[RMDB]
RNA sequence: GGGAACGACUCGAGUAGAGUCGAAAAACUCUCACCAGUUAAGGUACUGUAACUGAUCCUCGAGGAGUAGUGUCCGAGACUCAGGACACGAGUCUCUCUAGAACUGAUCUAGAAGUACUCCUGGAGUACAGUACCGUACUCCAGCGAGCGUGGGAGACACUGAUAGUCGUUUCGACGACUAUCAGUGAAAAGAAACAACAACAACAAC
Reactivity to DMS in 0.01 (KOAc 150mM, MgCl2 10mM, bicine 150mM(pH8.5), 24C), signal-to-noise 3, nucleotides 027 to 156: a070c010u000c000u000c010a040c020c030a070g010u000u000a070a040g000g020u000a020c020u000g030u010a030a090c040u000g000a130u000c090c030u000c070g010a060g020g000a160g040u010a060g020u000g010u000c020c010g000a150g020a110c090u000c060a260g010g010a090c040a080c030g010a110g020u000c020u000c050u000c020u000a030g010a070a210c230u010g000a140u000c010u000a010g000a060a140g030u010a060c010u020c000c000u000g000g000a050g050u000a080c000a040g000u000a040c040c020g020u000a000c010u000c030c040a070g000c040g010a070g040c050g020u000g010g000g000a080g030a280
Reactivity to 2A3 in 0.01 (KOAc 150mM, MgCl2 10mM, bicine 150mM(pH8.5), 24C), signal-to-noise 5, nucleotides 027 to 156: a000c000u000c000u000c010a000c000c010a060g020u090u100a120a050g000g010u010a000c000u010g050u110a250a110c020u050g050a230u080c020c010u030c050g140a010g010g000a010g010u060a040g020u050g040u020c050c040g030a030g070a150c090u080c220a070g020g040a040c010a000c030g010a010g020u010c020u000c000u000c000u020a000g020a080a050c160u160g100a180u070c000u000a010g000a040a010g050u010a000c000u000c000c000u030g090g010a000g010u010a010c010a010g040u050a030c000c020g000u000a000c000u010c030c010a030g010c040g090a060g030c100g030u000g000g000g010a010g010a010